[RMDB]
RNA sequence: GGGAACGACUCGAGUAGAGUCGAAAAGAUAUGGAUCCUGGUGAGCGAUGAAAUGGGUCGGAAACGACCCAUGGAGCUCGAACCAGGGAUCCUAAGUCAAAGGGUCGGCUGUUCGCAGCCGACCCAACUAUUUACCUUUCUUCGGAAAGGUAAAUAGAAAAGAAACAACAACAACAAC
Reactivity to DMS in 0.01 (KOAc 150mM, MgCl2 10mM, bicine 150mM(pH8.5), 24C), signal-to-noise 2, nucleotides 027 to 126: g010a040u000a260u010g000g000a050u000c000c000u010g020g010u000g010a020g020c000g010a120u020g000a100a170a000u000g000g010g040u000c000g020g000a070a050a170c000g020a010c000c000c010a000u000g000g000a070g020c010u000c050g010a060a040c010c010a020g010g000g010a010u000c010c000u000a010a120g000u000c030a090a190a160g000g020g000u000c000g000g000c010u000g010u000u000c210g020c010a020g020c000c000g000a020c000c000c000a010a030